This 177-nucleotide RNA was probed chemically with 2A3 and DMS. For DMS the reverse transcriptase was MarathonRT. The DMS profile rests on 1,408 reads.
[RMDB]
RNA sequence: GGGAACGACUCGAGUAGAGUCGAAAAGAUAUGGAUCUACCGGGAGAUUGGUGUAUCGGAAACGAUACGAGAGAUCGACGAUCGGUAGAGUCCUAAGUCAAAACUGCUGGGGUUCGCCCCAGCAGAACACCGUUACAAACUUCGGUUUGUAACGGUGAAAAGAAACAACAACAACAAC
Reactivity to 2A3 in 0.01 (KOAc 150mM, MgCl2 10mM, bicine 150mM(pH8.5), 24C), signal-to-noise 1, nucleotides 027 to 126: g000a000u010a000u000g000g000a000u000c010u000a000c000c000g000g030g000a020g000a010u080u150g110g030u300g180u140a000u020c000g000g000a000a000a010c000g010a010u000a000c030g000a030g020a020g020a060u000c030g220a290c020g000a100u000c010g000g000u010a000g010a000g040u020c000c000u000a000a000g010u000c030a000a010a160a210c000u000g000c000u000g000g000g000g050u070u100c220g090c000c000c030c000a000g040c010a000g000a000a000
Reactivity to DMS in 0.01 (KOAc 150mM, MgCl2 10mM, bicine 150mM(pH8.5), 24C), signal-to-noise 1, nucleotides 027 to 126: g000a010u000a010u010g000g000a300u000c000u000a010c000c010g000g000g000a010g010a010u000u000g000g020u000g010u030a020u000c000g010g000a000a000a000c020g000a000u000a010c010g030a160g020a230g000a000u000c000g020a050c260g020a010u010c000g000g000u000a000g000a010g000u010c000c000u010a000a100g010u000c010a100a060a080a280c000u000g000c020u000g000g020g050g010u000u010c300g010c000c020c000c000a000g000c010a000g000a060a160